An RNA of 177 nucleotides, treated with DMS and 2A3 and read out base by base. DMS adducts were read by reverse transcription with MarathonRT.
[RMDB]
RNA sequence: GGGAACGACUCGAGUAGAGUCGAAAAGGUGCUAUGCGGCGCCACCUUGAUCGUGUGGACCACCAUCUCCGCGGCUCGUCAAGUGCCGGGUUUGUGGACCAUCCCGCAUACGGCACCGGGCAAGAGCACUCUUGUGAUAGUUCGCUAUCACAAGAGUAAAAGAAACAACAACAACAAC
Reactivity to DMS in 0.01 (KOAc 150mM, MgCl2 10mM, bicine 150mM(pH8.5), 24C), signal-to-noise 7, nucleotides 027 to 126: g030g000u000g010c010u010a030u000g000c020g010g020c280g020c200c020a040c040c060u010u010g010a110u010c210g000u010g040u000g010g010a280c060c040a040c070c200a060u000c110u000c020c020g010c050g000g000c010u000c020g000u000c260a100a140g010u000g000c010c010g010g000g010u000u000u000g010u000g000g000a120c090c100a120u010c120c000c000g010c010a030u000a060c150g010g010c000a010c010c070g010g020g010c080a080a050g000a090g010c120
Reactivity to 2A3 in 0.01 (KOAc 150mM, MgCl2 10mM, bicine 150mM(pH8.5), 24C), signal-to-noise 5, nucleotides 027 to 126: g000g000u010g010c020u030a010u060g020c000g010g030c060g050c040c010a030c010c020u100u190g210a210u220c080g040u080g010u030g180g040a050c000c010a020c010c030a060u040c090u050c080c030g260c030g110g010c020u020c040g200u130c140a230a110g010u010g030c010c010g000g000g020u010u020u060g020u010g010g020a040c030c010a060u100c020c000c000g000c000a000u020a050c070g060g000c000a000c000c010g000g000g000c070a110a030g040a020g090c050

For 2A3 the reverse transcriptase was SuperScript II with manganese. High 2A3 reactivity points to a flexible backbone, as in loops and unpaired stretches. For 2A3, 11,938 sequencing reads were counted. Reactivities are given for positions 27 through 126.